[RMDB]
RNA sequence: GGGAACGACUCGAGUAGAGUCGAAAAGUAGUGCUCGAGAGGGAGGCUGUCUCGCAGAGCUUAUAGAUCUUCUGAUCUUUCCCUCCUCCAUAUCGCUUAUGCGUCAAGCGAUAGACGCAUAAUUAAAAUCAAUACGUUCAUUCGUGAACGUAUUGAUAAAAGAAACAACAACAACAAC
Reactivity to 2A3 in 0.01 (KOAc 150mM, MgCl2 10mM, bicine 150mM(pH8.5), 24C), signal-to-noise 6, nucleotides 027 to 126: g050u080a000g060u020g080c010u010c040g080a080g010a030g100g060g000a040g120g040c100u100g090u100c010u000c040g020c090a020g020a010g030c000u040u050a110u050a030g020a010u000c030u270u080c150u300g010a020u000c000u000u030u000c000c000c010u010c000c000u000c000c000a060u080a050u110c050g000c080u030u010a010u010g000c000g000u000c020a040a090g120c050g170a070u060a100g000a000c000g000c020a000u000a010a010u100u130a030a070a010
Reactivity to DMS in 0.01 (KOAc 150mM, MgCl2 10mM, bicine 150mM(pH8.5), 24C), signal-to-noise 8, nucleotides 027 to 126: g000u000a060g020u000g010c030u000c030g020a110g010a130g000g000g000a050g010g020c080u000g010u010c020u000c040g020c150a150g000a070g010c030u000u000a050u010a030g010a020u000c000u000u010c280u010g010a020u000c010u000u000u000c010c000c000u000c020c010u000c010c020a090u000a060u000c040g020c260u000u000a010u000g000c000g000u000c000a070a140g010c190g010a080u000a050g000a010c000g010c000a000u000a010a020u000u000a030a040a050